Structure probing data (DMS and 2A3) for a 177-nucleotide construct. It was measured as part of the RMDB libraries RFM100 and RFMREP. The RNA was probed in 150 mM KOAc, 10 mM MgCl2 and 150 mM bicine (pH 8.5) at 24 C.

[RMDB]
RNA sequence: GGGAACGACUCGAGUAGAGUCGAAAAAAACCAUGUGGAGGACCGAACAGGUGAACGUUGAAAAGUUCUCUGAUGAGCUGAGGGUAGGAGUGAAAGGCUAAUCAAACCCCGUGAUAGCUGGUUCUCUACUAAUGUACAAAUUCGUUUGUACAUUAGUAAAAGAAACAACAACAACAAC
Reactivity to DMS in 0.01 (KOAc 150mM, MgCl2 10mM, bicine 150mM(pH8.5), 24C), signal-to-noise 9, nucleotides 027 to 126: a060a050a090c030c010a100u020g010u010g000g000a020g010g000a020c010c010g010a140a110c040a030g000g010u030g000a020a010c030g010u010u020g010a100a080a090a140g000u000u000c000u000c010u000g010a100u020g010a080g010c030u000g000a080g010g000g010u010a080g000g000a080g010u010g010a090a080a100g010g010c050u010a050a070u010c050a040a050a080c030c000c000c160g010u020g000a060u020a040g000c020u000g010g010u000u000c000u000c010u000
Reactivity to 2A3 in 0.01 (KOAc 150mM, MgCl2 10mM, bicine 150mM(pH8.5), 24C), signal-to-noise 9, nucleotides 027 to 126: a000a000a000c070c010a090u130g030u080g060g010a020g000g010a010c010c030g030a110a050c020a010g030g060u090g070a010a010c030g030u100u180g130a090a100a030a040g000u010u000c010u000c010u020g120a170u090g070a040g010c020u030g030a150g020g020g010u060a050g020g120a030g020u070g100a150a070a050g140g010c040u060a050a010u040c030a060a050a190c010c000c010c010g050u060g060a090u140a070g010c020u010g010g020u010u000c010u000c000u000